[RMDB]
An RNA of 177 nucleotides, treated with 2A3 and DMS and read out base by base. The DMS profile rests on 5,800 reads. Conditions: 150 mM KOAc, 10 mM MgCl2 and 150 mM bicine (pH 8.5), 24 C. It was measured as part of the RMDB library TTRDES. For DMS the reverse transcriptase was MarathonRT.
RNA sequence: GGGAACGACUCGAGUAGAGUCGAAAAGAUAUGGAGGAUGACAGGACAUGAAGGAGGUCGGAAACGACCUACCUUCAACAGCCUGUAUCCUCCUAAGUCAAAAUCUGAAAGCUUCGGCUUUCAGAAACCUUGUUAUAAUCUUCGGAUUAUAACAAGGAAAAGAAACAACAACAACAAC
Reactivity to 2A3 in 0.01 (KOAc 150mM, MgCl2 10mM, bicine 150mM(pH8.5), 24C), signal-to-noise 3, nucleotides 027 to 126: g000a010u020a010u090g000g000a010g020g020a000u060g150a050c000a010g010g020a020c130a300u210g000a010a010g000g000a000g020g000u010c010g000g000a020a000a000c020g010a000c010c020u050a150c010c000u010u000c000a000a020c020a010g000c000c000u000g000u000a000u010c000c000u000c000c000u000a000a000g000u000c010a000a000a050a300u030c000u020g000a010a010a020g020c020u080u230c300g260g010c000u010u060u000c010a000g000a030a000a000
Reactivity to DMS in 0.01 (KOAc 150mM, MgCl2 10mM, bicine 150mM(pH8.5), 24C), signal-to-noise 3, nucleotides 027 to 126: g010a020u000a100u010g000g000a010g010g010a010u000g020a050c010a000g000g010a020c100a120u010g010a040a010g010g000a070g010g010u000c000g010g000a020a030a060c010g010a020c000c000u000a020c000c000u000u000c000a040a060c110a220g010c000c000u000g000u000a020u000c000c000u000c000c000u000a000a050g000u010c010a130a080a160a170u000c000u000g000a020a010a010g010c010u000u010c300g030g020c000u000u000u000c000a020g000a010a110a130